RNA sequence: GGGAACGACUCGAGUAGAGUCGAAAACGCUCAUGCCUGCACCUCUGCCACCACAUUGCCGGUACGCGGAUGGAAACAGGCAGCGCGAUGCGCAAUGCCCUCAUCCUCGCCAAGCCGGUCGAGCGGAAGUCGUGGAUGAGUUCGCUCAUCCACGACUAAAAGAAACAACAACAACAAC
Reactivity to DMS in 0.01 (KOAc 150mM, MgCl2 10mM, bicine 150mM(pH8.5), 24C), signal-to-noise 2, nucleotides 027 to 126: c100g000c040u000c030a110u000g020c060c000u000g020c040a180c000c020u010c060u000g000c030c050a160c020c030a020c070a200u010u020g020c030c020g000g010u000a110c260g050c040g010g000a090u010g000g030a040a040a140c300a090g020g030c050a000g000c100g010c000g020a130u030g030c020g000c020a050a130u000g020c000c020c000u010c130a200u000c000c020u010c000g020c020c000a070a190g030c010c040g020g000u000c080g000a070g040c030g000g000a060
Reactivity to 2A3 in 0.01 (KOAc 150mM, MgCl2 10mM, bicine 150mM(pH8.5), 24C), signal-to-noise 1, nucleotides 027 to 126: c010g000c030u030c040a090u110g000c000c030u020g000c020a040c000c000u050c030u060g040c030c000a020c000c010a030c090a160u150u200g050c040c040g000g030u050a030c000g000c020g010g090a080u150g000g020a100a080a000c020a000g050g000c010a010g020c000g000c010g270a190u300g050c020g000c010a100a180u110g000c000c000c000u010c040a030u020c000c000u040c010g000c030c030a100a020g000c030c050g000g060u090c060g030a020g010c040g000g080a050